[RMDB]
RNA sequence: GGGAACGACUCGAGUAGAGUCGAAAAAGUAAAGGAUGGCCCUGUUAUCAAAGGAGAUGCUUAGAAAGGUGUGUGUAGAGGUUAGCACUGCAAACUCCAAGGUGCUGCUCUGUAGGAAGUAGACCAUUUUCCCUUACUUCCUUCUAGCAGGGAAGAGCUUCCGUGUUAAUUUCGAUUAACACGGAAGAAAAGAAACAACAACAACAAC
Reactivity to 2A3 in 0.01 (KOAc 150mM, MgCl2 10mM, bicine 150mM(pH8.5), 24C), signal-to-noise 4, nucleotides 027 to 156: a010g110u110a040a050a030g080g040a080u090g050g020c040c010c020u030g050u050u100a130u120c070a080a080a040g030g010a050g010a020u080g030c030u110u110a040g070a120a100a030g070g000u040g000u010g000u020g030u070a020g000a030g070g030u130u150a020g000c020a020c050u040g030c040a110a070a120c040u040c050c020a050a060g060g010u050g000c000u010g010c000u000c040u050g020u020a010g000g010a020a010g020u010a010g070a050c030c020a080u090u020u050u040c000c000c000u000u010a020c000u000u000c010c000u020u030c040u050a020g000c020a020g020g000g040a030a020g030a040g100
Reactivity to DMS in 0.01 (KOAc 150mM, MgCl2 10mM, bicine 150mM(pH8.5), 24C), signal-to-noise 2, nucleotides 027 to 156: a090g020u010a070a090a100g020g000a110u000g020g020c000c000c000u000g020u000u000a120u000c070a060a030a140g040g010a100g000a170u000g020c100u000u000a100g020a050a080a110g010g040u000g010u000g030u000g010u010a060g000a090g000g020u010u000a100g020c030a080c040u000g050c040a050a040a090c060u000c010c010a120a260g000g040u000g010c010u010g020c010u000c060u000g010u000a040g020g010a040a040g010u000a030g020a100c050c050a140u000u000u000u000c010c000c030u000u000a030c030u000u000c010c010u000u000c090u000a100g000c050a040g000g020g000a050a040g030a150g000
The record gives the reactivity of an RNA of 207 nucleotides to 2A3 and DMS. The 2A3 profile rests on 2,760 reads. For DMS the reverse transcriptase was MarathonRT. The RNA was probed in 150 mM KOAc, 10 mM MgCl2 and 150 mM bicine (pH 8.5) at 24 C.